Structure probing data (2A3 and DMS) for a 177-nucleotide construct. It was measured as part of the RMDB library M2PK90. In probing experiments dimethyl sulfate is read out at A N1 and C N3, which are open when not base-paired. For DMS, 24,388 sequencing reads were counted. The 2A3 profile rests on 33,306 reads.
RNA sequence: GGGAACGACUCGAGUAGAGUCGAAAACAAUUGAGGGUCGCACACACACAGACUAAGUCUGACACUGACAGAGCCUAAACCGCUCUGUCAGUGUGCGAGAUAUCGUUCUUAAUGUGAGCAGAGGAAAGAUUUGAACUAUAUUCGUAUAGUUCAAAUCAAAAGAAACAACAACAACAAC
Reactivity to 2A3 in 0.01 (KOAc 150mM, MgCl2 10mM, bicine 150mM(pH8.5), 24C), signal-to-noise 9, nucleotides 027 to 126: c020a030a140u120u200g040a130g030g070g060u070c040g010c020a010c000a000c000a000c000a000c020a050g010a010c020u100a140a050g020u000c010u020g020a010c000a000c010u000g000a000c000a000g000a000g000c000c000u040a060a050a030c010c010g000c000u000c000u000g000u000c000a000g000u000g000u000g000c010g040a010g000a000u060a010u070c070g060u180u010c030u030u110a130a090u100g020u030g040a040g010c050a040g050a050g070g120a110a060a100
Reactivity to DMS in 0.01 (KOAc 150mM, MgCl2 10mM, bicine 150mM(pH8.5), 24C), signal-to-noise 9, nucleotides 027 to 126: c050a110a110u010u000g010a080g010g000g010u000c060g020c030a080c030a040c060a050c100a120c190a030g000a020c020u010a090a180g010u000c010u000g000a040c010a010c010u000g000a010c000a010g000a010g010c000c010u010a050a070a120c300c300g000c000u000c000u000g000u000c000a000g000u000g000u000g010c070g000a020g000a070u000a190u000c090g000u000u000c010u000u000a140a110u000g010u000g000a070g020c030a080g010a080g000g000a070a090a090